This 177-nucleotide RNA was probed chemically with DMS and 2A3.
For 2A3, 5,454 sequencing reads were counted.
2A3 is a SHAPE reagent: it acylates the 2'-hydroxyl of flexible nucleotides of all four kinds.
Reactivities are given for positions 27 through 126.
DMS adducts were read by reverse transcription with MarathonRT.

RNA sequence: GGGAACGACUCGAGUAGAGUCGAAAAGAUAUGGACGAGUGGACAGCGAGGAUCUACGGUCGGAAACGACCGUAGGGAGCUGCCACAUCGUCCUAAGUCAAACCGAUGUGUGUUCGCACACAUCGGACAUCGAGUAAACCUUCGGGUUUACUCGAUGAAAAGAAACAACAACAACAAC
Reactivity to DMS in 0.01 (KOAc 150mM, MgCl2 10mM, bicine 150mM(pH8.5), 24C), signal-to-noise 2, nucleotides 027 to 126: g000a020u010a040u010g020g020a010c000g010a070g020u000g000g020a180c100a000g030c010g000a070g040g010a010u020c000u000a000c000g000g010u000c000g010g010a010a010a030c010g020a020c020c000g000u000a000g000g000g000a000g040c000u000g020c010c000a010c010a030u010c010g000u000c000c000u000a000a050g000u000c000a120a150a250c000c000g010a000u000g020u000g020u000g010u000u010c300g020c010a010c000a010c000a000u000c000g000g000a080
Reactivity to 2A3 in 0.01 (KOAc 150mM, MgCl2 10mM, bicine 150mM(pH8.5), 24C), signal-to-noise 1, nucleotides 027 to 126: g000a000u020a010u040g000g000a000c010g020a010g020u000g000g040a180c010a030g000c020g090a300g040g010a000u000c000u010a000c010g000g030u000c000g000g000a000a000a000c010g000a010c030c000g000u010a000g000g000g000a010g010c000u020g020c010c000a000c010a010u010c000g000u000c000c000u020a000a000g000u010c000a050a080a150c010c000g010a000u000g010u000g010u000g010u070u140c300g040c130a000c000a000c010a000u000c010g000g000a030